[RMDB]
RNA sequence: GGGAACGACUCGAGUAGAGUCGAAAAUAGCGAAGUAGGAUUUUAUGCGUCAAGUGUUCACAGGCUGGGGAGUCGCCGUGAAACGAAAAGCAGAAAGCCUGCUGCUUACGAUAUAAUUUCCGCACCCAUAAGAAGUCUCUGUUCGCAGAGACUUCAAGAUUAGAACUAAGUUCGCUUAGUUCUAAUCAAAAGAAACAACAACAACAAC
Reactivity to DMS in 0.01 (KOAc 150mM, MgCl2 10mM, bicine 150mM(pH8.5), 24C), signal-to-noise 3, nucleotides 027 to 156: u000a100g020c050g030a060a050g010u000a080g010g000a030u000u000u010u000a080u010g020c020g000u020c070a060a300g020u000g010u000u010c070a030c010a110g020g010c020u000g030g010g020g000a120g020u000c010g000c020c020g000u000g000a030a070a070c030g010a120a050a040a080g000c040a080g000a070a060a080g010c040c010u000g020c030u000g010c050u000u000a040c020g030a130u000a030u010a040a130u000u000u010c020c020g000c030a170c020c010c010a170u000a060a150g000a020a010g010u000c000u000c000u010g020u010u000c300g040c010a020g000a030g010a010c000u000u000c000a010a140
Reactivity to 2A3 in 0.01 (KOAc 150mM, MgCl2 10mM, bicine 150mM(pH8.5), 24C), signal-to-noise 8, nucleotides 027 to 156: u150a020g020c030g040a100a010g040u090a070g030g020a030u020u020u030u050a070u080g010c020g020u040c080a060a060g020u050g070u210u030c020a010c070a100g010g010c030u110g020g010g040g040a070g100u110c030g000c010c010g010u020g010a040a010a010c020g020a030a040a030a040g010c010a010g050a050a040a010g050c010c000u020g010c000u000g000c010u020u020a010c020g040a010u010a010u020a150a070u030u030u000c010c000g010c050a070c010c020c000a030u070a140a080g000a000a000g000u000c000u000c000u000g030u040u050c110g010c050a000g000a000g000a000c000u000u000c000a000a000